[RMDB]
RNA sequence: GGGAACGACUCGAGUAGAGUCGAAAACGUCUACAGUUCGCUGUAGACGAAAGGCGCGGCACCGUCCGCGGAACAAACGGGCCCAUACAAAAAUUAAAAUUAAAAGAUGAUGGUUCGCCAUCAUCAACUAUACGAGAAGGUUCGCCUUCUCGUAUAGAAAAGAAACAACAACAACAAC
Reactivity to 2A3 in 0.01 (KOAc 150mM, MgCl2 10mM, bicine 150mM(pH8.5), 24C), signal-to-noise 4, nucleotides 027 to 126: c010g000u000c000u010a000c000a010g010u030u060c120g050c070u020g000u010a000g000a000c000g000a010a000a000g050g050c020g000c030g000g000c040a030c130c020g120u140c000c000g010c010g060g190a020a020c020a020a030a010c020g010g050g000c050c010c000a070u180a070c050a030a240a110a110a050u250u300a210a080a080a110u150u260a180a100a030a060g000a000u000g000a000u000g000g050u040u040c210g050c050c000a000u000c010a000u000c000a000a010
Reactivity to DMS in 0.01 (KOAc 150mM, MgCl2 10mM, bicine 150mM(pH8.5), 24C), signal-to-noise 2, nucleotides 027 to 126: c010g010u000c000u000a010c000a000g020u000u020c180g040c000u000g000u000a000g000a010c000g020a020a070a060g000g020c000g000c000g010g000c010a240c050c010g000u010c020c000g020c000g020g010a020a180c110a010a020a010c000g000g000g010c010c010c000a090u010a110c080a060a040a110a060a100u030u010a030a070a020a120u000u000a050a100a070a140g010a020u000g010a010u000g000g010u000u000c210g000c000c010a000u000c000a000u000c000a030a070

Structure probing data (2A3 and DMS) for a 177-nucleotide construct.
Values cover nucleotides 27 to 126.
For DMS the reverse transcriptase was MarathonRT.
For DMS, 1,717 sequencing reads were counted.
The reactions ran in a buffer of 150 mM KOAc, 10 mM MgCl2 and 150 mM bicine (pH 8.5), at 24 C.
It was measured as part of the RMDB library M2PK50.
2A3 adducts were read by reverse transcription with SuperScript II with manganese.
The 2A3 profile rests on 4,377 reads.